An RNA of 177 nucleotides, treated with DMS and 2A3 and read out base by base. Values cover nucleotides 27 to 126. The 2A3 profile rests on 655 reads. For 2A3 the reverse transcriptase was SuperScript II with manganese. Conditions: 150 mM KOAc, 10 mM MgCl2 and 150 mM bicine (pH 8.5), 24 C. It was measured as part of the RMDB library OK2TRN.
RNA sequence: GGGAACGACUCGAGUAGAGUCGAAAAGGUCAUGAGCAGCGCAGGAUUUGCAUGACAAGCAAUUUGUAAUUUAUGGCAAUGGGUCGGCCUAAUCUCAUAUUGCAACUCAAUUUUACGUGGCUUGAUGUGAUGCUACCCUCUUCGGAGGGUAGCAUCAAAAAGAAACAACAACAACAAC
Reactivity to DMS in 0.01 (KOAc 150mM, MgCl2 10mM, bicine 150mM(pH8.5), 24C), signal-to-noise 1, nucleotides 027 to 126: g000g000u010c040a080u000g000a040g000c040a050g020c030g010c060a040g000g020a080u000u010u010g010c030a120u000g000a090c080a080a170g000c090a040a030u000u040u000g000u000a040a070u000u000u000a070u020g000g000c000a090a070u000g000g000g020u000c080g030g000c000c050u000a000a040u000c040u000c030a050u000a080u000u000g000c020a100a200c230u000c090a030a020u010u000u000u010a040c150g060u000g020g020c040u010u000g010a070u000g030
Reactivity to 2A3 in 0.01 (KOAc 150mM, MgCl2 10mM, bicine 150mM(pH8.5), 24C), signal-to-noise 1, nucleotides 027 to 126: g010g000u090c030a040u000g000a000g040c040a030g120c020g000c010a020g050g140a050u000u020u280g040c060a060u150g140a050c040a020a030g020c020a070a060u070u080u110g020u030a040a040u030u050u140a160u250g030g000c000a020a090u100g140g000g000u040c030g010g000c000c000u030a050a030u030c040u030c080a060u140a050u130u050g040c000a030a090c020u060c070a070a170u040u130u090u160a020c090g020u020g000g090c010u040u050g020a110u140g120